[RMDB]
RNA sequence: GGGAACGACUCGAGUAGAGUCGAAAAAAGGUCCAAGUGCCAUCAGCGGUCUUCACUUCCGUCUUGACUGGUUGUGUUGGAGUAGCCUUGGUGCCAUCUGCCAAAUCAGAUUUAUCGCUUGGAAGCAAGCAUCCACUGGAUUCGUCCAGUGGAUGCUAAAAGAAACAACAACAACAAC
Reactivity to DMS in 0.01 (KOAc 150mM, MgCl2 10mM, bicine 150mM(pH8.5), 24C), signal-to-noise 1, nucleotides 027 to 126: a100a070g010g000u000c010c010a100a050g030u010g000c050c010a070u000c030a070g000c080g000g020u020c070u000u010c230a050c130u010u000c000c000g000u000c070u020u120g000a120c070u000g030g000u000u050g000u000g040u040u000g000g000a080g000u030a040g000c000c010u000u000g050g000u000g000c190c060a020u000c020u020g000c010c040a030a060a120u050c130a000g010a110u030u000u030a170u030c130g020c050u000u000g000g000a050a030g000c080a030
Reactivity to 2A3 in 0.01 (KOAc 150mM, MgCl2 10mM, bicine 150mM(pH8.5), 24C), signal-to-noise 3, nucleotides 027 to 126: a000a000g090g000u020c000c000a030a020g000u020g130c010c000a080u080c050a030g050c030g050g000u030c030u110u080c060a070c020u040u000c000c000g100u070c070u210u200g070a180c080u080g040g030u070u050g050u070g020u020u100g010g040a110g080u060a010g000c010c000u000u070g000g010u070g040c010c000a060u020c010u020g010c010c030a000a110a130u090c000a050g050a070u000u130u240a150u200c070g000c060u030u020g070g010a100a040g070c110a020
Description:
Chemical mapping of a 177-nucleotide RNA with DMS and 2A3. 2A3 adducts were read by reverse transcription with SuperScript II with manganese. For 2A3, 1,219 sequencing reads were counted. DMS adducts were read by reverse transcription with MarathonRT. Conditions: 150 mM KOAc, 10 mM MgCl2 and 150 mM bicine (pH 8.5), 24 C. Source: RMDB library OK1LIB, as collected in RNAgym.